[RMDB]
RNA sequence: GGGAACGACUCGAGUAGAGUCGAAAAGGCAGCACCCGCAGCAGACUGUCCAGGCGCAGUUCGGCAGCGCCGGCGCCAUCCGCCAGGGUCACCCGCAAUGGCAGUUGCGGCUGGCGCCCGGCGGCUAGUAGUAGUAGGCAUUCGUGCCUACUACUACAAAAGAAACAACAACAACAAC
Reactivity to DMS in 0.01 (KOAc 150mM, MgCl2 10mM, bicine 150mM(pH8.5), 24C), signal-to-noise 4, nucleotides 027 to 126: g010g000c030a070g010c040a100c030c020c050g020c070a080g020c040a090g000a090c070u000g000u010c040c040a100g020g020c070g010c040a060g000u000u000c070g010g020c050a080g020c020g000c020c030g000g000c020g010c030c020a030u000c010c000g010c000c070a100g010g020g010u000c030a040c170c020c130g010c110a080a180u000g000g010c110a100g000u000u000g000c010g000g010c090u000g010g000c000g010c070c010c000g010g010c000g000g000c110u010a080
Reactivity to 2A3 in 0.01 (KOAc 150mM, MgCl2 10mM, bicine 150mM(pH8.5), 24C), signal-to-noise 2, nucleotides 027 to 126: g040g010c040a030g010c020a060c010c020c030g000c020a020g040c010a020g040a100c010u030g010u030c060c080a100g060g040c040g000c060a030g040u110u080c050g080g000c020a040g090c020g000c010c010g010g000c000g010c000c000a020u010c010c000g010c030c020a030g050g040g000u010c010a020c030c030c030g050c080a030a120u080g130g010c060a090g070u030u040g010c010g000g000c010u010g010g020c050g110c070c010c010g000g010c010g020g010c010u010a010